[RMDB]
RNA sequence: GGGAACGACUCGAGUAGAGUCGAAAAUGGUGUCACCCGGCGAACGUGUCGAGGUUGGGCAGCUCAUUGGCUACUCAGGGGACACCGGGACCGCCGGCGUUCCGCAUGUCCAUUGCGAGCUGCUGGCAGGAAUCUAGCAAUUCGUUGCUAGAUUCCUAAAAGAAACAACAACAACAAC
Reactivity to DMS in 0.01 (KOAc 150mM, MgCl2 10mM, bicine 150mM(pH8.5), 24C), signal-to-noise 3, nucleotides 027 to 126: u000g020g020u000g010u000c060a180c020c010c010g000g040c000g010a050a100c260g020u000g020u000c030g000a110g020g010u010u010g000g000g000c010a020g000c010u000c150a160u000u010g000g010c040u010a030c020u000c070a190g010g000g000g010a010c020a010c070c000g000g000g010a170c120c110g010c010c000g000g000c040g010u000u000c040c030g000c080a050u010g000u000c100c120a050u000u000g000c070g000a030g010c010u010g020c010u000g010g020c070
Reactivity to 2A3 in 0.01 (KOAc 150mM, MgCl2 10mM, bicine 150mM(pH8.5), 24C), signal-to-noise 2, nucleotides 027 to 126: u050g000g020u020g010u070c030a080c040c020c000g050g000c020g000a250a140c140g080u080g030u150c030g030a140g040g060u100u110g080g030g020c000a010g000c000u020c060a290u110u220g030g000c040u030a010c020u030c120a060g120g030g030g000a010c020a000c000c000g000g020g010a210c020c010g010c010c000g050g030c000g010u020u000c070c010g050c020a000u070g020u060c100c030a080u010u110g090c010g000a000g000c070u060g000c020u000g080g020c000

Structure probing data (DMS and 2A3) for a 177-nucleotide construct. For DMS, 3,414 sequencing reads were counted.